This 207-nucleotide RNA was probed chemically with 2A3. The 2A3 profile rests on 1,127 reads. The data come from the RNA Mapping Database (RMDB), library OK3TST.

RNA sequence: GGGAACGACUCGAGUAGAGUCGAAAAGAAAGAAAGAAAGAAAGGUAUGAAGUCCUAUUCACGCCCGAUAGGAUAAACUUCAUAUUGAUCGUGUAUGUGCUAACGCACAUACACGAAUGCGCAUGCAGAACUGCAUGCAUGAACAUAGGGCGUGCAAGAUUACGAGGGUGUUCGCACCCUCGUAAUCAAAAGAAACAACAACAACAAC
Reactivity to 2A3 in 0.01 (KOAc 150mM, MgCl2 10mM, bicine 150mM(pH8.5), 24C), signal-to-noise 2, nucleotides 027 to 156: g050a030a060a000g090a070a030a010g040a020a110a010g080a110a050a000g010g000u030a010u050g020a030a010g020u000c000c010u000a000u020u010c040a000c000g000c010c000c000g000a010u000a000g010g010a030u130a030a190a040c010u030u020c030a010u040a030u090u090g050a030u020c010g010u010g000u000a000u000g040u000g000c070u100a120a040c090g000c000a000c000a000u000a000c000a000c010g000a000a010u040g000c030g000c000a000u010g000c000a010g050a300a040c150u010g010c010a000u000g000c000a000u130g050a010a010c050a070u180a060g000g010g000c000g000u000g000c000a010a100